[RMDB]
RNA sequence: GGGAACGACUCGAGUAGAGUCGAAAACUGGACGAUAACCUCUUAGCGUAUUCCGUUGAUGUCGUAGGUGACGAACGAUAUACCUUGCGGUUCAAGGAUUUACGCACCGGAGAACAGUACCCGGACGGUACGCGUCAGGGUUCGCCCUGACGCGUACAAAAGAAACAACAACAACAAC
Reactivity to DMS in 0.01 (KOAc 150mM, MgCl2 10mM, bicine 150mM(pH8.5), 24C), signal-to-noise 1, nucleotides 027 to 126: c000u000g000g050a060c210g000a130u010a120a100c240c000u000c010u000u020a300g000c030g000u000a040u020u020c010c030g000u000u000g000a050u000g010u000c010g050u000a040g000g020u000g000a050c240g000a070a070c300g030a060u000a050u030a060c030c000u000u050g000c010g040g030u000u000c030a020a090g000g000a050u000u000u000a020c020g000c010a000c200c300g000g010a070g000a040a150c010a000g000u000a150c010c050c040g000g050a100c210g010
Reactivity to 2A3 in 0.01 (KOAc 150mM, MgCl2 10mM, bicine 150mM(pH8.5), 24C), signal-to-noise 1, nucleotides 027 to 126: c000u010g020g110a030c050g100a130u140a110a110c000c000u000c000u060u110a040g000c010g020u040a020u000u010c040c060g070u010u030g010a060u100g080u130c000g000u020a000g000g070u040g050a020c120g090a240a060c070g050a060u000a000u040a300c000c050u050u120g050c000g020g000u030u000c000a000a020g000g000a000u000u050u000a000c020g000c030a040c000c040g050g010a050g030a050a030c010a050g000u060a080c020c000c000g020g080a060c120g000